[RMDB]
RNA sequence: GGGAACGACUCGAGUAGAGUCGAAAAUAUGCACGCCGGUGGAGGUGACUACGCGUGUAUGGCGUUCGUGACACCCACGAGCUUUUCGCUGUCGCGCGCUGUUUCAAGUGUCGCGCUGCGCUAUAGAAGUCGCUGGUGCAUUCGUGCAUCAGUGGCUAAAAGAAACAACAACAACAAC
Reactivity to 2A3 in 0.01 (KOAc 150mM, MgCl2 10mM, bicine 150mM(pH8.5), 24C), signal-to-noise 9, nucleotides 027 to 126: u110a010u010g010c000a000c000g010c000c010g040g010u020g010g010a050g000g050u080g030a030c010u040a020c050g000c010g010u020g010u020a040u060g050g030c020g010u010u010c010g000u020g030a050c010a040c020c020c000a010c020g010a010g010c000u070u080u050u070c020g000c010u050g100u230c040g000c000g000c000g000c020u030g060u070u160u150c070a070a010g010u000g130u150c010g000c000g000c020u020g000c010g000c010u050a040u020a060g130a080
Reactivity to DMS in 0.01 (KOAc 150mM, MgCl2 10mM, bicine 150mM(pH8.5), 24C), signal-to-noise 9, nucleotides 027 to 126: u040a040u010g010c010a020c020g000c010c110g000g030u010g010g000a130g010g010u020g000a080c000u010a110c230g010c010g010u010g010u010a030u010g010g010c080g010u010u000c030g010u000g000a100c100a090c070c060c020a070c060g000a040g000c030u010u010u010u010c020g010c010u000g000u040c020g000c010g000c040g010c020u000g000u010u030u030c180a110a040g010u000g000u040c010g010c010g000c020u000g000c010g010c170u010a060u030a070g010a140